[RMDB]
RNA sequence: GGGAACGACUCGAGUAGAGUCGAAAAGAUAUGGAAAGCGAAGAACGAGCCAGAGCAAGUUGUCGGAAACGACAAGUUGCGACGAAGGCUCGGGAGCUUUCCUAAGUCAAAGAGAAGUUCGCUUCUCGACAUUAGAGAACUUCGGUUCUCUAAUGUCAAAAGAAACAACAACAACAAC
Reactivity to 2A3 in 0.01 (KOAc 150mM, MgCl2 10mM, bicine 150mM(pH8.5), 24C), signal-to-noise 4, nucleotides 027 to 126: g010a010u060a040u120g000g020a000a000a010g010c060g260a300a050g030a200a050c010g010a000g000c020c000a040g020a000g040c010a020a040g280u000u010g000u000c010g030g040a110a080a060c010g010a010c010a010a010g200u000u000g000c030g240a050c050g090a160a080g000g000c000u000c000g000g000g010a010g000c010u010u010u000c000c000u000a090a020g010u000c070a140a180a020g020a000g000a020a010g000u120u300c300g030c190u020u020c020u020c050
Reactivity to DMS in 0.01 (KOAc 150mM, MgCl2 10mM, bicine 150mM(pH8.5), 24C), signal-to-noise 6, nucleotides 027 to 126: g000a050u000a300u000g000g000a010a010a010g010c000g020a180a170g010a110a200c010g000a000g020c010c010a080g000a230g010c010a010a020g000u000u000g010u000c010g010g000a060a090a230c010g000a000c000a010a010g000u000u000g010c000g000a110c250g000a150a110g000g000c000u000c000g000g020g010a120g000c000u000u010u000c000c010u000a010a080g010u000c040a090a090a120g000a020g000a010a010g020u010u020c300g000c010u000u000c000u000c010

Structure probing data (2A3 and DMS) for a 177-nucleotide construct. For DMS, 7,161 sequencing reads were counted. Source: RMDB library TTRDES, as collected in RNAgym. The RNA was probed in 150 mM KOAc, 10 mM MgCl2 and 150 mM bicine (pH 8.5) at 24 C. DMS adducts were read by reverse transcription with MarathonRT. 2A3 is a SHAPE reagent: it acylates the 2'-hydroxyl of flexible nucleotides of all four kinds. For 2A3 the reverse transcriptase was SuperScript II with manganese.